[RMDB]
RNA sequence: GGGAACGACUCGAGUAGAGUCGAAAAGCGCUCACUCUUAGUAACACUUCCUAGUAGGUAUUAGGUGGUAAGCCGAGCUCUUCCUCGGUCUUGUUCUGAAUGCACACAUGUCUAGGGGCUAAGGAUGCUUAGUGUCAGACUUCGGUCUGACACUAAGAAAAGAAACAACAACAACAAC
Reactivity to 2A3 in 0.01 (KOAc 150mM, MgCl2 10mM, bicine 150mM(pH8.5), 24C), signal-to-noise 7, nucleotides 027 to 126: g060c060g010c000u030c020a040c000u030c000u060u070a020g020u080a150a050c020a040c090u110u100c020c010u010a020g030u030a030g060g080u080a070u120u070a100g060g020u080g040g010u070a030a010g000c010c000g020a010g000c010u040c040u240u100c020c000u000c010g010g010u050c020u040u070g030u080u020c030u040g090a080a020u070g010c020a020c000a010c020a160u110g030u090c010u020a010g020g010g010g000c010u010a030a010g060g020a050u100g010
Reactivity to DMS in 0.01 (KOAc 150mM, MgCl2 10mM, bicine 150mM(pH8.5), 24C), signal-to-noise 3, nucleotides 027 to 126: g000c150g020c080u000c010a050c060u010c020u000u000a020g010u030a100a060c100a150c080u050u000c000c020u010a070g030u000a070g000g020u010a040u000u020a070g000g000u000g000g010u010a070a030g000c020c010g010a020g000c300u020c120u010u010c250c000u000c020g000g010u010c050u010u010g020u010u000c030u030g030a080a060u000g000c030a050c090a100c150a060u010g010u010c050u000a070g000g000g000g000c010u030a030a030g010g010a070u030g000